[RMDB]
RNA sequence: GGGAACGACUCGAGUAGAGUCGAAAAGCUUACUCCUAAAACUGGUACAGGUAUAGCUAUAUCUGUUAAACCAGAGAGUACAGCUGAUCAAGAGACUUAUGGUGGAGCUUCAGUGUGUCUCUAUUGCGCAACUAGAAAUGUUCGCAUUUCUAGUUGCAAAAGAAACAACAACAACAAC
Reactivity to 2A3 in 0.01 (KOAc 150mM, MgCl2 10mM, bicine 150mM(pH8.5), 24C), signal-to-noise 1, nucleotides 027 to 126: g000c000u000u010a000c000u000c040c040u070a110a140a060a110c010u010g000g000u010a010c000a000g030g040u010a020u020a010g170c140u140a030u010a000u030c000u000g020u010u100a060a030a010c010c000a000g020a010g020a000g050u000a020c070a070g000c010u010g020a020u090c090a060a010g020a000g040a060c010u100u120a060u210g120g000u100g000g120a040g040c040u100u070c030a070g030u060g010u010g010u070c000u040c000u000a110u060u170g010c080
Reactivity to DMS in 0.01 (KOAc 150mM, MgCl2 10mM, bicine 150mM(pH8.5), 24C), signal-to-noise 2, nucleotides 027 to 126: g010c020u000u000a010c000u010c000c280u020a040a060a200a300c020u000g010g010u010a030c000a000g020g010u000a010u000a120g040c210u000a120u000a010u000c000u000g020u010u020a020a050a000c000c000a000g020a090g010a030g010u000a000c180a040g040c000u000g000a200u010c080a080a060g020a140g010a030c060u000u000a070u010g000g000u010g010g010a090g010c050u020u000c060a070g010u000g010u000g000u000c020u000c020u000a100u010u010g020c270